Source: RMDB library OK3TST, as collected in RNAgym. An RNA of 207 nucleotides, treated with 2A3 and read out base by base.
RNA sequence: GGGAACGACUCGAGUAGAGUCGAAAAGCAUUAAGAGAGUACUCUUAUUCCCACAACGUUGGUGACAACGUUGAUUUUCCGGUGGCCACCCGCCCGGGCCACCGUUACUCCACUCCACUCCUUCGGGACUGGUUUGGAGGAACAACCGAGGGCUAAAGGUAGGAAAAUCAUUCGUGAUUUUCCUACCAAAAGAAACAACAACAACAAC
Reactivity to 2A3 in 0.01 (KOAc 150mM, MgCl2 10mM, bicine 150mM(pH8.5), 24C), signal-to-noise 2, nucleotides 027 to 156: g050c020a070u100u070a040a000g020a000g030a080g200u130a150c000u000c000u020u010a010u030u000c000c000c010a000c000a000a000c000g010u010u010g060g040u110g050a040c000a000a000c000g000u000u010g030a040u090u080u150u060c040c010g000g000u000g010g010c020c000a080c050c070c070g000c010c000c000g020g000g000c000c000a000c000c000g000u000u050a010c000u000c000c000a000c000u000c000c000a010c010u000c000c000u000u080c160g030g000g000a000c000u000g010g000u010u020u010g000g000a020g000g000a020a040c030a000a030c040c080g120a060g000g000g000c010u020a040a020a040
Reactivities are given for positions 27 through 156. The RNA was probed in 150 mM KOAc, 10 mM MgCl2 and 150 mM bicine (pH 8.5) at 24 C. Values are in units of 0.01, from 0 to 300, in steps of 10. For 2A3 the reverse transcriptase was SuperScript II with manganese.